Record summary:
This 207-nucleotide RNA was probed chemically with 2A3 and DMS. The 2A3 profile rests on 677 reads. For 2A3 the reverse transcriptase was SuperScript II with manganese. Source: RMDB library OK3TST, as collected in RNAgym. Conditions: 150 mM KOAc, 10 mM MgCl2 and 150 mM bicine (pH 8.5), 24 C. Reactivities are given for positions 27 through 156. Values are in units of 0.01, from 0 to 300, in steps of 10. The DMS profile rests on 2,851 reads.
RNA sequence: GGGAACGACUCGAGUAGAGUCGAAAAAACUGGGAGAAUGACGGGUAUGCUGCAUUGGGUGGAGAGCCUUGUUAUAAAUCAGAUUUUAGUAAAUAUACAGAACCCAACAAGUGUGUGACAGAUGUCCCUCAUGAUAAAUGCCUAAACGGUAUAACCGUACUCUAAGGGUGUUCGCACCCUUAGAGUAAAAAGAAACAACAACAACAAC
Reactivity to 2A3 in 0.01 (KOAc 150mM, MgCl2 10mM, bicine 150mM(pH8.5), 24C), signal-to-noise 1, nucleotides 027 to 156: a000a000c160u120g000g000g000a060g040a010a130u030g030a060c030g000g000g000u030a060u060g030c020u000g000c050a070u120u100g030g020g000u040g000g030a020g000a000g020c000c050u010u060g050u030u100a100u060a180a030a030u020c030a010g090a150u110u110u100u000a020g000u020a060a090a000u220a050u060a030c020a010g070a110a060c040c010c020a000a010c030a090a050g020u030g050u020g010u030g010a010c000a070g090a050u070g060u000c000c000c000u000c030a000u000g130a000u030a100a030a020u070g000c000c010u090a180a090a000c070g000g000u030a020u130a100a010c030c000g030
Reactivity to DMS in 0.01 (KOAc 150mM, MgCl2 10mM, bicine 150mM(pH8.5), 24C), signal-to-noise 2, nucleotides 027 to 156: a030a150c050u000g010g010g000a130g010a110a050u000g010a080c050g000g040g000u000a060u010g020c020u000g030c030a120u000u010g020g010g050u000g000g000a120g010a070g030c010c020u000u070g040u000u000a160u000a030a060a070u010c030a200g020a140u010u000u000u000a090g000u010a060a050a100u000a140u000a150c040a130g000a060a080c020c020c000a050a090c050a020a060g000u000g000u000g030u050g000a120c020a050g010a080u000g010u000c010c030c020u010c040a080u000g000a060u020a020a060a070u000g000c020c010u000a100a020a110c020g020g000u000a080u000a080a120c050c010g040